[RMDB]
RNA sequence: GGGAACGACUCGAGUAGAGUCGAAAACGAUUCGGAACGGCUCAUCUCGACGAGAGGCGGCAGUCCUCAGUGCUCUUACUCUUUUCUGUAAAGAGGAGACUGCUGGACCCGCCGCCCAAGUUCGAGCAUGGGCCAUGCUCCGAGCGAAGGGACGCGCCAGAUGAGUUUGGUUCGCCAAACUCAUCUGAAAAGAAACAACAACAACAAC
Reactivity to 2A3 in 0.01 (KOAc 150mM, MgCl2 10mM, bicine 150mM(pH8.5), 24C), signal-to-noise 1, nucleotides 027 to 156: c060g050a080u070u010c010g000g000a010a000c030g000g000c030u060c010a000u000c020u000c010g000a000c010g030a040g020a120g090g000c000g000g000c030a000g030u000c000c000u000c010a050g020u130g230c030u010c000u110u220a300c010u090c010u000u130u050u060c300u300g280u300a010a000a010g010a000g010g000a000g010a000c000u020g060c140u010g010g000a000c030c060c070g000c000c000g000c000c000c000a040a030g020u140u030c000g000a000g000c090a000u000g010g010g000c000c000a040u000g000c020u000c000c000g010a000g000c020g030a180a170g060g010g040a030c050g030c050g050c000